Structure probing data (2A3) for a 207-nucleotide construct.
RNA sequence: GGGAACGACUCGAGUAGAGUCGAAAAAUCUAAUUUUGCUCCAGCUAUGGCCGCUUAAUUUAAUUAACGCCGCCGCUUUAAGUAGCUUGAGGGGUUAGCAUCCAAUAAACAGAAGCUAACAUCCCAGUGGUAACAACUGGCUAACUUGUUACGCAGCCGAAAAUACCAGGUUCGCCUGGUAUUUUCGAAAAGAAACAACAACAACAAC
Reactivity to 2A3 in 0.01 (KOAc 150mM, MgCl2 10mM, bicine 150mM(pH8.5), 24C), signal-to-noise 1, nucleotides 027 to 156: a000u160c040u110a070a080u060u050u020u170g060c010u070c060c100a010g000c010u000a030u090g000g020c000c000g060c020u010u070a070a100u120u270u290a150a140u150u000a020a020c120g040c030c010g020c000c000g080c020u180u100u040a170a030g010u060a000g000c000u000u000g000a000g050g050g010g000u000u000a000g010c000a160u000c000c000a040a000u050a060a050a010c030a020g000a040a020g000c000u000a000a000c000a100u190c000c000c000a000g000u000g010g000u000a000a000c000a000a000c000u000g000g000c010u020a010a000c000u000u000g010u000u000a000c010g060c060a030g100c020